[RMDB]
RNA sequence: GGGAACGACUCGAGUAGAGUCGAAAAAUUCGCGGAUGGUGCAGUUGAGGUUGAGAAUCUUCGACUUGCGAAUUAUGAGAUGGUUGAGCGGGUGAAAGAAAUUGAGGCAUCAAAACGCUAUCGUGCAGCCGUCGUUUUUGAUGCACCAAUUAAUGUCACACUGUACACUUUUCGAAGUGUACAGUGUAAAAGAAACAACAACAACAAC
Reactivity to 2A3 in 0.01 (KOAc 150mM, MgCl2 10mM, bicine 150mM(pH8.5), 24C), signal-to-noise 7, nucleotides 027 to 156: a000u070u040c030g000c010g060g030a060u080g030g060u080g030c050a040g010u040u050g000a020g010g040u050u070g050a070g040a120a080u040c030u050u040c040g040a050c020u030u100g000c030g020a020a020u090u050a070u200g040a050g010a030u060g040g000u060u050g010a020g010c040g010g060g000u060g050a090a060a030g060a020a060a000u030u050g020a060g060g000c010a010u000c000a020a010a000a010c020g010c050u080a060u210c050g060u120g120c060a020g050c060c020g040u070c010g010u020u020u000u060u100g000a010u010g000c010a040c020c000a000a010u060u070a050a030u100g080u090c030
Reactivity to DMS in 0.01 (KOAc 150mM, MgCl2 10mM, bicine 150mM(pH8.5), 24C), signal-to-noise 3, nucleotides 027 to 156: a150u000u000c030g040c040g010g030a040u010g030g040u000g020c040a070g000u010u010g000a030g010g050u000u000g000a200g020a110a100u000c030u000u000c020g000a060c040u000u000g020c030g010a090a050u000u000a030u010g000a100g000a080u000g000g020u000u010g010a100g030c030g020g010g000u010g010a070a060a110g010a050a030a060u000u020g010a050g010g030c020a030u000c010a040a020a040a050c040g010c110u010a070u000c060g020u010g030c090a110g010c100c040g010u000c020g010u000u000u000u000u000g010a050u000g010c000a030c010c010a020a060u000u000a060a080u000g000u000c110